Chemical mapping of a 177-nucleotide RNA with 2A3 and DMS. The reactions ran in a buffer of 150 mM KOAc, 10 mM MgCl2 and 150 mM bicine (pH 8.5), at 24 C. The data come from the RNA Mapping Database (RMDB), library OK1LIB. For DMS the reverse transcriptase was MarathonRT.
RNA sequence: GGGAACGACUCGAGUAGAGUCGAAAAGAAGUUAUGCAAUUUUUCACUAAAUAUGGCUUGUGGGCUUAUUUAGGUGUUAUUAUAUCUGGUUUUAUUUUAGCUUUUAUUGGGCGCCAAGUAGCAAAAACGAUUAACUCACUUUCGAGUGAGUUAAUCGAAAAGAAACAACAACAACAAC
Reactivity to 2A3 in 0.01 (KOAc 150mM, MgCl2 10mM, bicine 150mM(pH8.5), 24C), signal-to-noise 4, nucleotides 027 to 126: g100a030a030g040u130u130a100u140g050c100a080a090u020u040u040u060u180c000a030c020u000a010a010a020u140a130u230g060g020c030u100u120g030u270g280g050g010c010u000u030a040u020u030u000a070g000g090u010g020u030u060a160u150u070a110u010a050u120c040u030g080g030u020u030u100u060a160u020u140u060u180a060g000c000u060u030u070u030a120u130u220g050g010g020c000g010c020c010a110a060g040u100a020g080c050a010a030a010a030a150
Reactivity to DMS in 0.01 (KOAc 150mM, MgCl2 10mM, bicine 150mM(pH8.5), 24C), signal-to-noise 1, nucleotides 027 to 126: g000a070a090g020u000u060a050u000g010c100a110a050u010u020u010u000u020c010a070c060u000a040a020a000u000a040u000g010g020c020u020u000g000u040g010g010g060c010u000u000a000u000u000u000a030g000g010u000g000u030u000a020u020u000a100u000a070u060c070u020g010g010u000u000u000u000a040u020u010u000u030a100g000c030u000u010u040u040a100u000u020g000g000g010c000g000c000c010a000a040g010u020a070g000c130a030a030a060a060a140